[RMDB]
RNA sequence: GGGAACGACUCGAGUAGAGUCGAAAAAGGUAGGGCCGUCCAGCACCGAUGCGCCGCAGCAGGUGAAAAUUAUUGAGGACCUGAUUGCACGUAAAGUGGAUGCCAUCACUAUCGUGCCUAACGAUGCGAUACGCUCCCCAUUCGUGGGGAGCGUAUCAAAAGAAACAACAACAACAAC
Reactivity to 2A3 in 0.01 (KOAc 150mM, MgCl2 10mM, bicine 150mM(pH8.5), 24C), signal-to-noise 2, nucleotides 027 to 126: a000g160g030u160a090g020g050g030c060c060g000u060c000c000a010g000c000a000c020c010g010a070u150g010c020g040c080c100g020c000a040g000c000a000g000g000u050g190a010a010a050a070u300u260a230u190u200g020a070g020g060a010c000c040u060g020a280u000u110g000c000a000c040g010u020a020a260a000g000u000g100g000a110u100g050c020c060a060u110c000a020c020u050a000u100c020g010u030g010c010c000u050a060a000c080g120a080u140g000c040
Reactivity to DMS in 0.01 (KOAc 150mM, MgCl2 10mM, bicine 150mM(pH8.5), 24C), signal-to-noise 2, nucleotides 027 to 126: a090g000g000u000a040g010g080g000c100c040g020u040c040c000a020g000c060a110c060c030g000a070u000g000c000g030c050c100g010c070a070g000c020a050g000g000u000g010a040a080a100a110u020u040a140u010u020g000a190g040g000a030c030c000u040g000a050u000u020g000c000a280c000g030u000a090a130a160g000u040g000g020a060u020g030c030c110a110u080c050a100c000u000a150u000c000g020u000g000c000c100u020a030a070c060g000a050u000g010c300
Source: RMDB library OK1LIB, as collected in RNAgym. Chemical mapping of a 177-nucleotide RNA with 2A3 and DMS. For DMS, 2,123 sequencing reads were counted. The reactions ran in a buffer of 150 mM KOAc, 10 mM MgCl2 and 150 mM bicine (pH 8.5), at 24 C. Values cover nucleotides 27 to 126. 2A3 is a SHAPE reagent: it acylates the 2'-hydroxyl of flexible nucleotides of all four kinds.